[RMDB]
RNA sequence: GGGAACGACUCGAGUAGAGUCGAAAACCGCGGGCCCCCCAAUUCAGAGCCAAGAACCCACCCAUCGGGGUCCGACGUUCCUACCCUUUCUUACCUGUGGCCGGCAUGGUCCCAGCCUCCUCGCUGGAAAGCAUAUAGUUCGCUAUAUGCAAAAGAAACAACAACAACAAC
Reactivity to DMS in 0.01 (KOAc 150mM, MgCl2 10mM, bicine 150mM(pH8.5), 24C), signal-to-noise 8, nucleotides 027 to 129: c070c010g040c100g010g020g000c010c000c000c000c150c110a080a050u060u030c140a100g040a080g020c050c020a070a100g000a070a080c020c010c010a120c020c050c040a090u060c170g000g000g000g000u000c030c050g000a180c060g000u000u000c010c040u010a150c030c040c020u030u030u030c030u000u030a140c050c030u010g000u030g000g000c060c030g030g010c050a050u050g010g020u040c060c030c000a100g020c030c030u030c020c020u000c010g020c020u000g030g000a100a070a110
Reactivity to 2A3 in 0.01 (KOAc 150mM, MgCl2 10mM, bicine 150mM(pH8.5), 24C), signal-to-noise 9, nucleotides 027 to 129: c010c000g010c000g000g010g000c000c000c000c000c010c020a010a010u150u110c050a050g030a020g100c030c020a070a030g040a060a070c000c010c010a050c020c030c000a070u140c070g000g000g010g010u020c010c000g020a040c020g020u030u010c010c010u030a110c010c010c000u040u110u030c030u070u110a150c010c020u070g020u100g080g000c020c010g040g040c070a080u110g020g000u020c000c010c000a040g020c000c000u030c000c000u030c030g010c020u040g020g020a090a040a000
This 170-nucleotide RNA was probed chemically with DMS and 2A3.